Conditions: 150 mM KOAc, 10 mM MgCl2 and 150 mM bicine (pH 8.5), 24 C. Structure probing data (2A3 and DMS) for a 177-nucleotide construct. The DMS profile rests on 967 reads. The data come from the RNA Mapping Database (RMDB), library TTRDEL.
[RMDB]
RNA sequence: GGGAACGACUCGAGUAGAGUCGAAAAGAUAUGGAAUACGGGAGCGUUAUACUACCCACCUCGGAAACGAGAGGUAUGGGCGCAUCGAUCGUAUUCCUAAGUCAAAAGGUACGGUUCGCCGUACCAAGGGUUUUAAGAAGUUCGCUUCUUAAAACCCAAAAGAAACAACAACAACAAC
Reactivity to 2A3 in 0.01 (KOAc 150mM, MgCl2 10mM, bicine 150mM(pH8.5), 24C), signal-to-noise 1, nucleotides 027 to 126: g010a010u070a070u160g020g000a000a030u000a010c010g040g050g000a020g030c000g000u000u100a180u010a300c100u050a010c050c000c010a120c040c000u010c000g010g060a120a110a060c060g010a010g000a030g030g000u010a040u150g120g060g000c010g000c040a200u280c010g110a050u020c020g000u010a000u020u000c000c000u000a110a010g040u060c050a000a000a040a260g040g000u000a000c000g030g040u020u050c270g060c070c000g000u000a000c000c000a000a020
Reactivity to DMS in 0.01 (KOAc 150mM, MgCl2 10mM, bicine 150mM(pH8.5), 24C), signal-to-noise 1, nucleotides 027 to 126: g000a080u010a300u000g000g000a010a000u000a010c000g000g000g000a030g070c010g030u000u000a050u000a300c080u010a020c020c000c010a210c160c000u000c000g000g000a090a140a180c020g000a000g010a130g000g000u000a030u000g040g010g010c000g040c010a110u000c140g000a060u000c010g010u000a000u000u000c000c000u000a040a040g000u030c050a050a050a040a100g000g000u000a010c010g010g000u000u000c270g000c000c000g010u000a000c000c010a040a050